[RMDB]
This 177-nucleotide RNA was probed chemically with DMS. DMS adducts were read by reverse transcription with MarathonRT. The DMS profile rests on 737 reads.
RNA sequence: GGGAACGACUCGAGUAGAGUCGAAAAUCAUACAGGUAAUGUACUGUUGUCGUAAUAAGGUUUGAGAGACGUGUGUCUCACACAUGAGCAUAAAAACCCUAUCAUCAUGCUUAUGCACCAUAAAAGCAAUCCAACUCGGAUUCGUCCGAGUUGGAUUAAAAGAAACAACAACAACAAC
Reactivity to DMS in 0.01 (KOAc 150mM, MgCl2 10mM, bicine 150mM(pH8.5), 24C), signal-to-noise 1, nucleotides 027 to 126: u000c070a050u020a050c050a000g010g000u000a100a220u030g030u000a090c070u010g040u010u000g000u010c140g000u000a110a100u000a070a070g010g030u000u010u000g010a100g010a050g030a010c020g020u010g000u000g000u020c050u020c070a070c050a100c020a020u010g000a010g000c020a000u040a050a020a050a120a070c020c000c010u000a080u020c130a090u010c080a040u010g010c010u000u000a050u000g000c160a080c050c060a090u010a060a020a070a180g040c200